[RMDB]
RNA sequence: GGGAACGACUCGAGUAGAGUCGAAAACUCCACACUCCUUCCCCCCUGCGGGGCCCCCCCAUAAGAUGGCGAGAAAUCCACUCAUGGGUCCAUCGUCCAUCUCCUUCUUACCUUUUGGCCGGCAUGGCAAACAGAUGAUGUUCGCAUCAUCUGUUUGAAAAGAAACAACAACAACAAC
Reactivity to DMS in 0.01 (KOAc 150mM, MgCl2 10mM, bicine 150mM(pH8.5), 24C), signal-to-noise 2, nucleotides 027 to 126: c070u000c010c050a090c070a060c070u000c020c050u010u000c020c010c020c030c040c060u010g050c100g040g020g010g000c000c000c010c030c010c000c010a020u010a010a060g010a040u010g010g000c050g020a030g000a150a190a080u000c000c020a060c300u020c230a100u000g020g000g030u020c080c020a290u000c010g020u000c000c020a030u000c020u000c080c030u000u020c040u000u010a120c060c040u000u000u000u000g020g000c010c030g000g020c060a020u000g010g010